[RMDB]
RNA sequence: GGGAACGACUCGAGUAGAGUCGAAAAAGGGCCUGCCUGAGAAUAAGAACGACACAGAAGAAGCAGAGGCACUUCCUGUGUUGGUGCACACCUAUAAUCCUAGUACUCAGGAAGUGCAGGAAGGAGAAAAUUUAGUGGACUUCGGUCCACUAAAUUUAAAAGAAACAACAACAACAAC
Reactivity to DMS in 0.01 (KOAc 150mM, MgCl2 10mM, bicine 150mM(pH8.5), 24C), signal-to-noise 1, nucleotides 027 to 126: a110g070g000g000c040c060u000g010c100c010u000g030a110g000a080a100u000a080a150g010a100a080c160g020a070c050a050c060a050g010a060a050g030a120a040g020c070a090g040a100g020g000c040a030c010u000u000c010c000u010g020u000g000u000u010g000g020u000g030c170a070c110a060c050c070u020a050u060a080a100u000c020c040u000a150g020u020a080c030u000c040a010g000g000a040a040g020u000g010c010a020g000g000a070a040g000g000a120g020a090

Chemical mapping of a 177-nucleotide RNA with DMS.
The data come from the RNA Mapping Database (RMDB), library OK2TST.
Conditions: 150 mM KOAc, 10 mM MgCl2 and 150 mM bicine (pH 8.5), 24 C.
Reactivities are given for positions 27 through 126.
DMS adducts were read by reverse transcription with MarathonRT.